[RMDB]
RNA sequence: GGGAACGACUCGAGUAGAGUCGAAAAUGCGGUCAGAUCUAUGCGUACGGAAACCAUCCAUGUGUAACGAACACGCGGACCGCGGACCUUCUAGGUCACCGGAUGGGAAAGCAUGCACUGCCAUCCGAAACGUACGGAGGCAUGCGAAAGGAUGGCGGACAGGCCUUGAAUUCGUUCAAGGCCUGUCAAAAGAAACAACAACAACAAC
Reactivity to DMS in 0.01 (KOAc 150mM, MgCl2 10mM, bicine 150mM(pH8.5), 24C), signal-to-noise 1, nucleotides 027 to 156: u000g010c030g000g000u000c050a050g040a060u000c030u000a120u000g000c070g040u000a090c080g030g020a180a120a130c040c000a120u000c010c010a120u010g020u040g020u020a110a070c180g010a150a130c080a110c070g000c070g010g010a040c030c010g030c010g040g030a030c010c010u000u010c140u010a080g020g030u000c000a160c000c000g000g020a080u000g000g010g010a130a080a300g020c060a110u000g000c000a120c000u000g000c000c010a060u000c000c000g000a040a090a120c050g000u000a010c030g020g010a240g060g000c030a050u010g000c020g040a050a150a300g000g010a120u000g000g030c000g000
Reactivity to 2A3 in 0.01 (KOAc 150mM, MgCl2 10mM, bicine 150mM(pH8.5), 24C), signal-to-noise 4, nucleotides 027 to 156: u110g000c000g020g000u000c020a020g020a220u020c060u130a060u180g020c050g050u070a030c050g060g060a060a100a040c010c000a010u010c010c000a060u070g030u000g020u090a090a140c140g050a090a030c100a010c030g030c050g040g000a000c000c000g000c000g000g000a000c010c000u180u150c120u220a060g000g000u010c010a020c060c050g010g000a010u000g020g030g030a020a000a000g020c020a010u060g040c070a040c140u130g000c000c000a010u020c010c000g000a090a110a050c000g000u030a010c060g000g100a050g010g070c040a020u050g010c020g040a050a000a000g000g000a000u000g000g000c000g010
Background
Conditions: 150 mM KOAc, 10 mM MgCl2 and 150 mM bicine (pH 8.5), 24 C. Structure probing data (DMS and 2A3) for a 207-nucleotide construct. The DMS profile rests on 1,696 reads. In probing experiments dimethyl sulfate is read out at A N1 and C N3, which are open when not base-paired.